Structure probing data (2A3) for a 177-nucleotide construct.

[RMDB]
RNA sequence: GGGAACGACUCGAGUAGAGUCGAAAAGAUGAGAACAUACUGUUCAGUUGGGCUAUCAGGUGACACUCCAAAUCUUGCAGGAGGUCACGAGCAAGAAAAAGAGGACGGCCUGACUUAACAAAAGAAACCCAUGCGAGUGAUUCGUCACUCGCAUGGGAAAAGAAACAACAACAACAAC
Reactivity to 2A3 in 0.01 (KOAc 150mM, MgCl2 10mM, bicine 150mM(pH8.5), 24C), signal-to-noise 1, nucleotides 027 to 126: g080a020u280g120a000g020a100a070c040a050u300a060c070u000g000u000u000c000a000g000u000u010g000g000g000c010u000a030u100c060a040g000g220u030g000a000c210a300c090u000c000c000a000a010a300u140c210u100u170g080c080a040g000g030a000g000g030u000c050a050c000g000a000g000c160a030a070g100a100a160a160a050a000g080a010g070g000a000c010g000g000c000c000u000g000a000c000u000u000a000a000c000a030a010a010a000g110a150a010a000
For 2A3 the reverse transcriptase was SuperScript II with manganese. The reactions ran in a buffer of 150 mM KOAc, 10 mM MgCl2 and 150 mM bicine (pH 8.5), at 24 C. Source: RMDB library OK1LIB, as collected in RNAgym.